[RMDB]
RNA sequence: GGGAACGACUCGAGUAGAGUCGAAAAAUAGGCUUAUCAAGAGAGGUGGAGGGACUGGCCCGAUGAAACCCGGCAGCCAGAAAUGGUGCCAAUUCCUGCAGCGGAAACGUUGAAAGAUGGGCCGAUGAUGCGGAUUGCUUCGGCAAUCCGAAAAGAAACAACAACAACAAC
Reactivity to DMS in 0.01 (KOAc 150mM, MgCl2 10mM, bicine 150mM(pH8.5), 24C), signal-to-noise 4, nucleotides 027 to 129: a060u010a080g000g020c080u060u020a090u050c070a020a030g090a090g020a060g040g020u000g000g040a050g000g090g050a220c000u000g060g040c090c000c030g040a080u060g060a060a040a040c090c070c070g040g040c050a000g000c020c030a030g000a080a130a090u000g010g070u020g000c000c030a100a090u000u010c000c000u000g040c040a060g040c010g000g000a090a070a140c100g040u020u000g030a020a040a050g030a010u000g010g010g030c020c020g000a030u030g010a050u040g040
Reactivity to 2A3 in 0.01 (KOAc 150mM, MgCl2 10mM, bicine 150mM(pH8.5), 24C), signal-to-noise 3, nucleotides 027 to 129: a000u170a020g000g000c020u070u050a010u080c100a140a000g120a010g010a080g080g000u050g030g010a080g010g000g000a050c010u010g000g010c010c000c010g120a140u120g010a030a040a030c020c040c000g000g000c010a080g210c030c000a000g030a000a050a050u070g040g000u000g000c000c000a010a020u010u030c020c010u060g030c000a010g000c030g020g040a050a020a000c030g000u000u040g030a050a020a000g060a000u020g000g020g000c020c020g000a050u070g020a040u100g020

Overview
The record gives the reactivity of an RNA of 170 nucleotides to DMS and 2A3. For 2A3 the reverse transcriptase was SuperScript II with manganese. Source: RMDB library 15KLIB, as collected in RNAgym. Values cover nucleotides 27 to 129. For DMS, 9,349 sequencing reads were counted.